RNA sequence: GGGAACGACUCGAGUAGAGUCGAAAAGGACUGCGCAGUCCGGCAACAUCAGCAGAGAGCCCGCGAUACGUGACGGAUUGGCUGAAGCGUACAGAAAUAUUGAGCCUCCUGCAAGAGGCAGCCAAGCAAAACGUACGUGAGUUCGCUCACGUACGAACACUUCAUAUACGUUCGCGUAUAUGAAGUGAAAAGAAACAACAACAACAAC
Reactivity to 2A3 in 0.01 (KOAc 150mM, MgCl2 10mM, bicine 150mM(pH8.5), 24C), signal-to-noise 6, nucleotides 027 to 156: g030g010a020c030u070g020c140g020c130a030g010u010c000c000g010g030c010a070a050c020a090u140c030a020g000c040a010g080a010g030a020g110c000c020c020g040c050g040a060u030a100c060g020u050g050a030c030g000g040a100u050u050g030g000c020u020g020a040a020g030c010g020u040a030c030a040g160a080a120a030u260a110u170u130g040a040g010c000c010u000c000c040u100g060c040a080a030g000a020g020g000c010a000g030c010c000a030a010g020c060a020a050a060a030c010g000u000a000c000g010u010g000a000g000u040u120c160g030c070u000c000a000c000g000u000a000c000g000a010a000
Reactivity to DMS in 0.01 (KOAc 150mM, MgCl2 10mM, bicine 150mM(pH8.5), 24C), signal-to-noise 3, nucleotides 027 to 156: g000g010a040c020u000g030c090g040c060a100g000u000c000c020g000g020c020a080a070c040a100u030c020a110g090c040a080g000a130g020a150g010c040c010c020g010c050g000a140u000a050c050g000u000g000a150c070g000g000a150u000u010g000g010c000u000g010a080a300g020c020g020u000a170c060a050g000a070a060a110u000a210u000u010g000a150g000c020c020u000c020c010u000g040c120a100a090g000a060g030g010c040a040g020c000c020a040a090g010c040a040a040a120a160c020g020u000a010c000g070u010g000a040g010u010u000c300g040c000u000c000a010c030g010u000a010c010g000a020a070